[RMDB]
RNA sequence: GGGAACGACUCGAGUAGAGUCGAAAAGAGGUACAGCCUCGGAUGUUGACCAUGUCCUGUAGAGCACUCACAAGGCUAGGGGGCCUACCAGCUUACCAAACCUUAUGAAACUCCGAAGGGGCACGCGUUUAGUCCGGGAGUGAGGCUGCGAGAGCUACAUUGAGUCAUAGUUCGCUAUGACUCAAUGAAAAGAAACAACAACAACAAC
Reactivity to 2A3 in 0.01 (KOAc 150mM, MgCl2 10mM, bicine 150mM(pH8.5), 24C), signal-to-noise 8, nucleotides 027 to 156: g090a030g020g040u080a060c020a030g010c000c000u030c030g000g010a050u080g040u300u250g010a020c000c010a030u040g010u010c000c070u140g050u100a010g000a000g000c040a020c070u020c000a010c000a020a010g000g000c010u020a020g010g000g000g000g000c010c000u060a120c010c040a010g000c010u030u100a300c020c000a050a050a010c010c000u020u010a010u040g070a120a180a200c010u020c070c040g080a100a050g000g010g000g010c010a000c010g030c050g000u010u010u130a020g000u000c010c000g020g030g030a090g030u090g010a020g030g000c010u020g010c030g020a070g000a010g020c030u050a040
Reactivity to DMS in 0.01 (KOAc 150mM, MgCl2 10mM, bicine 150mM(pH8.5), 24C), signal-to-noise 5, nucleotides 027 to 156: g000a100g010g020u000a040c030a130g030c020c000u000c010g020g010a030u010g000u000u000g000a030c010c010a040u000g000u000c000c000u000g000u000a040g010a040g010c010a100c090u000c010a020c020a030a030g020g000c010u000a300g020g000g010g010g030c010c030u000a130c300c200a100g000c000u000u000a170c010c000a040a110a040c000c000u000u000a030u010g000a040a150a050c000u000c020c010g010a170a240g000g000g010g030c010a010c020g010c110g020u000u000u000a180g000u000c000c020g000g020g000a110g010u000g000a080g020g020c020u000g000c020g010a090g010a100g010c010u000a110
This 207-nucleotide RNA was probed chemically with 2A3 and DMS. For DMS the reverse transcriptase was MarathonRT.